RNA sequence: GGGAACGACUCGAGUAGAGUCGAAAAGAUAUGGAAACAUAGCUUUUGACGGAGGGUCGGAAACGAUUCUCCGAUAAGCUGGGUUUCCUAAGUCAAACUGCGAAUUGGGUUCGCCCAAUUCGCAGAACGUAGGCUUAUUGUUCGCAAUAAGCCUACGAAAAGAAACAACAACAACAAC
Reactivity to 2A3 in 0.01 (KOAc 150mM, MgCl2 10mM, bicine 150mM(pH8.5), 24C), signal-to-noise 2, nucleotides 027 to 126: g000a000u030a010u100g010g020a010a000a010c010a070u030a000g000c010u070u230u200u300g180a050c020g000g010a000g000g000g030u000c000g000g010a030a010a010c000g000a010u020u000c000u000c010c010g000a040u070a020a000g000c010u020g000g010g040u000u000u000c000c000u010a060a000g000u010c030a030a070a140c000u010g000c000g000a000a010u010u000g030g010g060u050u160c300g180c050c000c000a010a010u000u010c000g000c010a000g010a000a000
Reactivity to DMS in 0.01 (KOAc 150mM, MgCl2 10mM, bicine 150mM(pH8.5), 24C), signal-to-noise 2, nucleotides 027 to 126: g000a040u000a180u010g010g000a020a010a000c000a070u000a010g010c010u000u000u000u000g020a180c060g000g000a020g000g000g000u000c000g010g010a070a030a120c020g010a020u000u000c010u000c000c010g000a010u000a020a010g020c010u000g000g020g000u000u000u000c000c000u010a020a110g010u010c010a100a130a260c000u000g010c010g010a010a020u000u000g010g010g030u000u010c260g000c010c000c000a020a010u000u000c000g000c000a010g000a020a040
Record summary:
The record gives the reactivity of an RNA of 177 nucleotides to 2A3 and DMS. 2A3 adducts were read by reverse transcription with SuperScript II with manganese. The reactions ran in a buffer of 150 mM KOAc, 10 mM MgCl2 and 150 mM bicine (pH 8.5), at 24 C. It was measured as part of the RMDB library TTRDEL. 2A3 is a SHAPE reagent: it acylates the 2'-hydroxyl of flexible nucleotides of all four kinds.